This 177-nucleotide RNA was probed chemically with DMS. Reactivities are given for positions 27 through 126. For DMS, 1,491 sequencing reads were counted. The reactions ran in a buffer of 150 mM KOAc, 10 mM MgCl2 and 150 mM bicine (pH 8.5), at 24 C. DMS adducts were read by reverse transcription with MarathonRT.
[RMDB]
RNA sequence: GGGAACGACUCGAGUAGAGUCGAAAAGGUCUGAUCUUCGGAUCAGACCAACUCUGAUUCCCAAUAGCUGCGUAUCUUGGCUAACACGGAUAGGCGUUGCCACUCAGGGGGGUUUCGACCCCCCUAAUUAGGCAGUGUAUUUCGAUACACUGCCUAAAAAAGAAACAACAACAACAAC
Reactivity to DMS in 0.01 (KOAc 150mM, MgCl2 10mM, bicine 150mM(pH8.5), 24C), signal-to-noise 2, nucleotides 027 to 126: g000g000u000c000u010g000a000u000c000u000u010c220g010g000a010u000c000a010g020a000c000c010a020a040c140u000c100u000g000a140u000u000c000c000c020a130a130u010a070g010c050u000g010c160g010u010a030u000c090u000u030g010g000c050u000a070a070c110a140c180g010g000a050u000a060g000g000c000g020u000u000g010c030c060a130c230u000c130a010g020g000g020g000g000g000u000u000u020c130g000a070c000c000c000c000c000c000u000a010a010